[RMDB]
RNA sequence: GGGAACGACUCGAGUAGAGUCGAAAACUUGAGGGAAUGCCGUAGGACCCGGGUUCGAUUCCCGGCAGCUCCACCGAAGGGCCAGGUCAGUGGCCCAUUUGCAGACUGCGACAGCCAUCACAGACCAGUCGUCAGUCUCGUUCGCGAGACUGACGGCAAAAGAAACAACAACAACAAC
Reactivity to 2A3 in 0.01 (KOAc 150mM, MgCl2 10mM, bicine 150mM(pH8.5), 24C), signal-to-noise 5, nucleotides 027 to 126: c030u060u090g040a070g010g020g050a090a110u070g060c030c010g010u070a050g020g070a040c000c000c010g010g010g000u050u110c050g020a050u060u100c000c000c000g000g000c020a030g000c040u010c010c010a060c010c010g040a090a070g010g000g000c000c000a050g040g070u200c100a060g110u020g030g000c000c000c000a050u020u020u050g000c020a010g020a070c020u030g000c010g020a030c040a020g030c010c000a050u040c020a030c020a040g080a060c020c020a020
Reactivity to DMS in 0.01 (KOAc 150mM, MgCl2 10mM, bicine 150mM(pH8.5), 24C), signal-to-noise 2, nucleotides 027 to 126: c040u000u110g020a100g000g010g000a060a100u010g000c060c050g060u000a110g000g000a090c040c020c010g050g000g050u000u020c130g030a270u030u000c010c030c040g000g000c090a040g000c110u000c030c040a140c090c050g030a060a050g010g000g040c030c000a090g000g000u020c110a030g020u000g000g000c000c020c030a000u010u040u020g000c120a130g000a080c040u000g000c030g000a060c080a060g000c060c040a080u020c000a030c040a090g000a060c010c060a110